[RMDB]
RNA sequence: GGGAACGACUCGAGUAGAGUCGAAAAAACGAAGAGGGCAUGGAGCCGUAUCCGCACGGCUGGGAUGUGUGGAGCAACGGCAUCAAAAAGUUUAUGGCUGAAAAAGGGAUCCAGCCGGAUCUGAUCACCUAAUCAGCAGGUUCGCCUGCUGAUUAGGAAAAGAAACAACAACAACAAC
Reactivity to DMS in 0.01 (KOAc 150mM, MgCl2 10mM, bicine 150mM(pH8.5), 24C), signal-to-noise 2, nucleotides 027 to 126: a110a070c080g010a040a090g000a080g000g000g000c150a070u010g000g000a090g000c000c000g010u000a140u000c030c040g040c000a020c020g040g000c020u000g000g010g010a100u000g050u000g000u000g000g000a020g020c170a050a020c030g000g000c000a100u020c060a070a010a070a050a050g000u000u000u010a120u020g010g010c020u000g000a060a050a020a120a120g000g030g020a060u010c030c030a080g050c190c090g000g000a030u010c040u000g000a090u010c170a170
Reactivity to 2A3 in 0.01 (KOAc 150mM, MgCl2 10mM, bicine 150mM(pH8.5), 24C), signal-to-noise 1, nucleotides 027 to 126: a020a000c050g040a030a020g050a020g030g000g070c040a100u110g050g020a020g010c000c000g000u000a060u000c000c020g060c000a000c010g090g060c080u150g120g070g040a080u200g010u040g000u030g070g000a010g030c020a030a020c000g020g030c000a010u050c010a010a080a020a020a020g020u050u100u160a160u090g020g000c020u050g010a060a000a000a060a120g060g030g020a000u000c010c000a020g100c100c000g010g000a000u000c010u040g060a100u200c010a020